Source information: The data come from the RNA Mapping Database (RMDB), library OK2TST. Chemical mapping of a 177-nucleotide RNA with DMS and 2A3. For 2A3, 597 sequencing reads were counted.
RNA sequence: GGGAACGACUCGAGUAGAGUCGAAAAGCGUCCAGCAAAUAGGCCUGACCCGCAAGAGGCGUAAACUGGCGCAAAUUUGCAGAUAAGAUCACCCCUGCUAAUGCACAGGUCACUGAGGUAAUAAUUAAGUUGGCUUGCUAUUCGUAGCAAGCCAACUAAAAGAAACAACAACAACAAC
Reactivity to DMS in 0.01 (KOAc 150mM, MgCl2 10mM, bicine 150mM(pH8.5), 24C), signal-to-noise 1, nucleotides 027 to 126: g010c040g010u000c000c000a030g020c020a050a070a040u000a130g010g000c010c020u000g050a230c070c060c060g030c120a180a100g010a030g000g040c000g000u000a030a110a070c040u000g040g020c000g010c000a070a120a120u000u010u000g010c040a040g010a160u000a060a090g010a150u010c070a080c020c000c040c010u010g020c020u020a040a110u040g030c040a040c020a040g010g000u010c040a070c070u000g000a070g010g010u010a090a030u010a150a070u000u030a050
Reactivity to 2A3 in 0.01 (KOAc 150mM, MgCl2 10mM, bicine 150mM(pH8.5), 24C), signal-to-noise 1, nucleotides 027 to 126: g020c040g190u260c030c010a030g000c080a020a050a030u190a070g000g000c000c000u070g000a090c000c030c050g000c010a070a090g050a030g200g000c010g000u080a030a030a030c010u020g020g000c000g050c040a000a010a150u100u080u050g020c030a000g030a040u080a240a050g030a060u090c030a080c030c000c000c000u010g040c000u000a130a090u090g000c000a050c020a080g020g080u070c050a000c080u110g030a060g010g080u000a060a030u000a120a060u200u110a070